[RMDB]
Chemical mapping of a 177-nucleotide RNA with DMS and 2A3.
2A3 is a SHAPE reagent: it acylates the 2'-hydroxyl of flexible nucleotides of all four kinds.
The RNA was probed in 150 mM KOAc, 10 mM MgCl2 and 150 mM bicine (pH 8.5) at 24 C.
For DMS the reverse transcriptase was MarathonRT.
RNA sequence: GGGAACGACUCGAGUAGAGUCGAAAACACAGAGAGCAAACCGCCAUGCCUUGCAUGGUAAGGGUGAAAGGGUGGGGUAAGAGCCCACCGCGCCGCUGGUGACAGUGGUGGCAAGGUAAACCCCACCCCUUAUUACCCAAUUCGUUGGGUAAUAAGGAAAAGAAACAACAACAACAAC
Reactivity to DMS in 0.01 (KOAc 150mM, MgCl2 10mM, bicine 150mM(pH8.5), 24C), signal-to-noise 9, nucleotides 027 to 126: c090a130c190a100g000a120g010a110g020c050a020a060a030c010c010g010c000c000a010u000g010c000c210u010u040g010c000a010u000g000g000u000a020a070g000g000g000u000g010a090a060a090g000g010g030u000g000g000g000g010u010a070a100g010a210g000c040c000c030a050c140c100g000c020g000c000c000g010c010u000g000g000u040g000a210c000a010g010u000g000g020u000g000g030c020a120a080g010g010u010a060a110a070c010c000c000c010a020c020c010
Reactivity to 2A3 in 0.01 (KOAc 150mM, MgCl2 10mM, bicine 150mM(pH8.5), 24C), signal-to-noise 9, nucleotides 027 to 126: c110a000c020a020g140a010g010a010g170c060a050a070a030c000c010g000c000c000a000u010g010c010c170u190u300g000c000a000u010g010g000u060a060a110g030g010g010u050g040a110a050a020g040g000g000u000g000g010g000g000u030a090a030g030a020g140c000c000c000a010c020c000g000c000g000c000c000g000c000u020g000g040u090g040a050c000a010g010u010g020g000u020g050g030c020a040a040g010g000u050a080a070a040c000c000c000c000a000c000c000